The record gives the reactivity of an RNA of 177 nucleotides to 2A3 and DMS. Reactivities are rounded to 0.1 and cut off at 0 and 3. DMS adducts were read by reverse transcription with MarathonRT. The reactions ran in a buffer of 150 mM KOAc, 10 mM MgCl2 and 150 mM bicine (pH 8.5), at 24 C. The DMS profile rests on 8,063 reads.
RNA sequence: GGGAACGACUCGAGUAGAGUCGAAAAAGAUGUUAUCAUAACUAGGACUAGAAGGUGGCCUCCCAGGGGCAUGGGCUCUGUCCCCUACAUCAACAUCCAACAAUGUGUCAGCUUCAUCAUUUGGAGAGUUACCUACACUAUUCGUAGUGUAGGUAACAAAAGAAACAACAACAACAAC
Reactivity to 2A3 in 0.01 (KOAc 150mM, MgCl2 10mM, bicine 150mM(pH8.5), 24C), signal-to-noise 5, nucleotides 027 to 126: a010g060a050u100g040u120u090a150u160c080a110u080a220a050c060u050a080g080g050a040c030u060a060g060a150a020g090g030u030g030g000c010c020u000c010c010c000a000g020g000g000g000c040a030u090g010g060g000c010u010c020u080g050u110c000c000c000c000u050a030c010a050u050c000a010a040c010a060u030c020c010a030a010c030a070a130u080g030u020g030u090c030a030g030c010u050u040c020a070u010c010a080u070u070u050g060g020a100g000a030
Reactivity to DMS in 0.01 (KOAc 150mM, MgCl2 10mM, bicine 150mM(pH8.5), 24C), signal-to-noise 6, nucleotides 027 to 126: a070g010a070u000g000u010u000a080u010c080a090u000a050a100c100u000a090g010g010a060c080u000a090g010a080a070g020g020u000g010g010c040c050u000c030c020c050a090g010g000g000g000c070a030u000g000g010g000c050u000c070u010g010u010c010c000c010c050u000a060c100a050u010c050a050a050c110a060u000c020c030a060a090c140a060a060u010g000u000g000u010c060a060g000c020u000u010c030a030u000c090a090u000u010u000g010g010a090g010a170